[RMDB]
RNA sequence: GGGAACGACUCGAGUAGAGUCGAAAAGCAGUGACGACAAUAUUAUCACCAUCACCGUCUGUAACGCGGAAGCCGACUCGUUCAAGCGCAUCGGCAUACUCCUCAACUUGAGCGGACUCACCAGCAGUAAGUUCGAUUUUAACUGGUUCGGCGAGCGCCCAGAGCUUACGUUCGCGUAAGCUCUGGGAAAAGAAACAACAACAACAAC
Reactivity to 2A3 in 0.01 (KOAc 150mM, MgCl2 10mM, bicine 150mM(pH8.5), 24C), signal-to-noise 1, nucleotides 027 to 156: g130c040a030g050u050g070a030c040g010a070c010a030a080u150a200u110u140a020u090c020a050c020c030a040u130c030a040c050c060g020u090c030u130g160u170a060a000c130g030c010g000g030a030a030g020c000c010g000a010c070u070c110g070u210u240c150a080a070g040c000g000c140a030u010c020g010g000c030a030u030a030c000u030c010c010u040c030a070a190c020u090u100g000a010g000c050g030g030a030c010u000c040a010c000c000a030g040c010a070g000u050a120a000g080u160u130c030g110a180u120u050u000u050a050a070c070u020g000g030u120u110c010g000g000c010g020a050g120c050g030